[RMDB]
RNA sequence: GGGAACGACUCGAGUAGAGUCGAAAAACAAAUACUCACGCUGCUUGGCGGGUGCGCACUGCUGUCUGGCCCGGCGCCGCGCUAGGGCGCACACCUAGCGUUGCAAAGGGUAACCGGGCUGAAAAAAGACUUUACAAUUGUUCGCAAUUGUAAAGUCAAAAGAAACAACAACAACAAC
Reactivity to 2A3 in 0.01 (KOAc 150mM, MgCl2 10mM, bicine 150mM(pH8.5), 24C), signal-to-noise 1, nucleotides 027 to 126: a000c040a000a060a010u110a030c010u010c010a030c030g090c060u090g020c010u110u210g080g020c020g000g040g000u030g020c030g030c020a090c060u070g000c010u040g060u140c060u090g010g020c000c000c000g010g000c020g020c010c000g000c020g010c000u000a000g000g010g060c100g050c050a010c020a040c030c000u010a010g000c000g010u010u030g000c020a120a070a040g030g000g000u020a010a010c010c000g000g000g000c020u040g060a080a030a000a030a020a020
Reactivity to DMS in 0.01 (KOAc 150mM, MgCl2 10mM, bicine 150mM(pH8.5), 24C), signal-to-noise 3, nucleotides 027 to 126: a040c100a050a060a050u000a050c030u000c000a140c150g000c050u000g020c090u000u010g010g030c050g010g010g020u000g020c020g020c050a130c030u000g020c010u010g010u010c060u010g010g010c000c000c000g020g010c300g000c010c060g020c000g010c010u000a000g000g010g000c100g000c150a030c090a120c010c000u000a010g000c000g000u000u000g020c030a080a260a130g020g010g010u000a070a060c050c000g010g000g030c030u000g000a000a020a090a100a110a090

This 177-nucleotide RNA was probed chemically with 2A3 and DMS. The data come from the RNA Mapping Database (RMDB), library M2PK90. DMS adducts were read by reverse transcription with MarathonRT. The RNA was probed in 150 mM KOAc, 10 mM MgCl2 and 150 mM bicine (pH 8.5) at 24 C. For 2A3, 3,518 sequencing reads were counted.